[RMDB]
RNA sequence: GGGAACGACUCGAGUAGAGUCGAAAACGGACGACGUGCGCUCGCCCGACCUGCACGCGGCCACGCCCCGGCUGCUGAUCGAACUGGCGGUGGACCUCGACCACCACGCCGCCGGGCACAGCCUGCAUAGAGAUCAUAAUUUCGAUUAUGAUCUCUAAAAAGAAACAACAACAACAAC
Reactivity to DMS in 0.01 (KOAc 150mM, MgCl2 10mM, bicine 150mM(pH8.5), 24C), signal-to-noise 9, nucleotides 027 to 126: c130g010g010a050c020g010a110c030g030u000g010c050g010c190u010c050g010c090c100c100g000a070c090c060u000g010c030a030c050g010c020g010g010c010c010a170c150g000c060c010c010c070g010g000c010u000g010c120u000g010a070u010c070g000a090a100c070u010g010g010c010g000g020u010g000g000a130c080c040u000c120g000a100c040c030a050c030c030a090c080g010c010c010g010c030c010g010g000g010c030a060c050a030g000c010c020u000g020c130a180
Reactivity to 2A3 in 0.01 (KOAc 150mM, MgCl2 10mM, bicine 150mM(pH8.5), 24C), signal-to-noise 6, nucleotides 027 to 126: c030g020g030a010c020g030a030c010g040u070g020c040g020c050u050c040g080c020c040c000g050a090c010c010u040g020c020a010c040g020c020g000g000c000c010a050c080g030c000c000c000c010g020g000c000u020g000c020u040g030a140u110c070g050a100a110c060u120g040g000c020g020g020u040g020g050a170c010c060u100c080g090a090c020c020a020c020c000a020c050g000c000c010g000c000c010g010g000g000c010a010c010a010g000c000c010u060g000c010a060